[RMDB]
RNA sequence: GGGAACGACUCGAGUAGAGUCGAAAAACACUGCUUGACGGUGUGUGGGGAGCAUCUGAAGAGGACGGCGGAUGGCCGUUCACGCCAAAUUCUCAAUUUAAUAUGACAAUUGUGAAUCAAGUAGCCAGUCAGGAUAAUCAUUCGUGAUUAUCCUGACAAAAGAAACAACAACAACAAC
Reactivity to 2A3 in 0.01 (KOAc 150mM, MgCl2 10mM, bicine 150mM(pH8.5), 24C), signal-to-noise 5, nucleotides 027 to 126: a000c030a000c010u030g010c010u030u070g040a040c040g010g000u000g000u010g010u030g020g040g010g000a040g080c010a010u000c020u070g030a090a060g080a070g110g070a040c040g030g020c020g020g110a100u070g120g010c010c000g300u020u020c010a010c000g000c000c000a050a050a040u040u000c010u000c000a010a010u060u080u110a170a140u220a190u250g080a030c070a020a030u010u010g010u010g020a000a020u020c010a030a010g010u010a020g100c040c040a000
Reactivity to DMS in 0.01 (KOAc 150mM, MgCl2 10mM, bicine 150mM(pH8.5), 24C), signal-to-noise 5, nucleotides 027 to 126: a060c090a200c020u000g010c030u000u000g000a100c170g010g010u000g030u010g010u000g010g000g000g010a100g010c040a040u000c030u000g010a110a100g010a130g010g010a040c060g020g020c010g010g010a080u000g010g010c000c020g010u000u000c010a060c060g010c040c050a090a140a060u000u000c010u000c000a030a030u000u000u000a080a130u010a100u020g010a140c180a010a030u000u000g000u000g000a020a060u000c080a030a060g030u000a030g000c050c090a120